The record gives the reactivity of an RNA of 207 nucleotides to 2A3 and DMS. It was measured as part of the RMDB library M2RFPK. For 2A3, 6,083 sequencing reads were counted. The RNA was probed in 150 mM KOAc, 10 mM MgCl2 and 150 mM bicine (pH 8.5) at 24 C.

[RMDB]
RNA sequence: GGGAACGACUCGAGUAGAGUCGAAAAUUGCGCUUGCCUAUUUAGGCAUACUUCUCAGGAUGGCGCGUUGCAGUCCAACAAGAUCCAGGGACUGUACAGAAUUUUCCUAUACCUCGCGUCGGGUUUGAAAACGUUAGGCACUUCGGUGCCUAACGAACCUAACUUAUCAGUUCGCUGAUAAGUUAGGAAAAGAAACAACAACAACAAC
Reactivity to 2A3 in 0.01 (KOAc 150mM, MgCl2 10mM, bicine 150mM(pH8.5), 24C), signal-to-noise 7, nucleotides 027 to 156: u050u080g020c040g020c030u040u080g030c010c010u140a220u200u210u300a040g000g000c020a010u060a060c050u130u070c090u050c110a040g120g020a110u130g030g000c020g000c030g000u040u040g000c000a000g000u000c000c010a050a060c060a180a150g120a230u120c100c070a050g010g000g000a000c000u000g000u010a010c010a040g190a110a050u040u030u020u030c000c000u050a050u050a100c020c020u030c000g000c010g020u020c000g020g040g020u050u080u120g050a070a070a000a010c000g000u000u000a000g000g000c000a000c000u020u060c210g110g010u000g000c000c000u000a000a000c000g000a000a000
Reactivity to DMS in 0.01 (KOAc 150mM, MgCl2 10mM, bicine 150mM(pH8.5), 24C), signal-to-noise 3, nucleotides 027 to 156: u010u000g050c030g020c030u020u000g020c000c020u000a220u000u010u000a030g050g020c020a090u000a060c080u000u000c070u000c100a130g010g000a100u000g010g010c010g010c000g000u010u000g040c010a020g000u000c020c020a110a220c060a090a180g000a100u000c070c040a160g000g010g000a070c030u000g010u000a130c100a160g020a070a080u000u000u000u000c030c010u000a160u000a040c070c020u000c020g010c080g040u000c010g010g000g030u000u010u010g000a090a080a120a160c000g000u000u010a000g000g000c000a010c000u000u000c300g020g000u010g000c020c000u000a000a000c000g000a000a030